[RMDB]
RNA sequence: GGGAACGACUCGAGUAGAGUCGAAAAGAUAUGGAUGAUGGACAUGCUUAGGGAUCGGAAACGAUCCUGGGAGCAACAGCCAUAUCCUAAGUCAAAAGGAGGGUUCAGGUUCGCCUGAACCCUCCAACUCCCAAGUACUCUUCGGAGUACUUGGGAGAAAAGAAACAACAACAACAAC
Reactivity to DMS in 0.01 (KOAc 150mM, MgCl2 10mM, bicine 150mM(pH8.5), 24C), signal-to-noise 1, nucleotides 027 to 126: g000a030u000a190u000g000g000a010u000g000a070u000g030g030a100c110a180u010g000c000u000u000a300g000g000g010a010u000c030g000g000a060a050a160c000g000a000u000c000c020u000g000g020g000a010g020c000a030a090c180a120g010c000c010a030u010a010u000c000c050u000a100a110g010u000c080a080a030a180a110g040g000a000g000g000g000u000u000c000a000g020g000u000u040c250g020c000c020u000g000a030a000c000c000c010u000c000c010a000a020

About this RNA: Chemical mapping of a 177-nucleotide RNA with DMS. The DMS profile rests on 689 reads. The reactions ran in a buffer of 150 mM KOAc, 10 mM MgCl2 and 150 mM bicine (pH 8.5), at 24 C. Values are in units of 0.01, from 0 to 300, in steps of 10. Values cover nucleotides 27 to 126.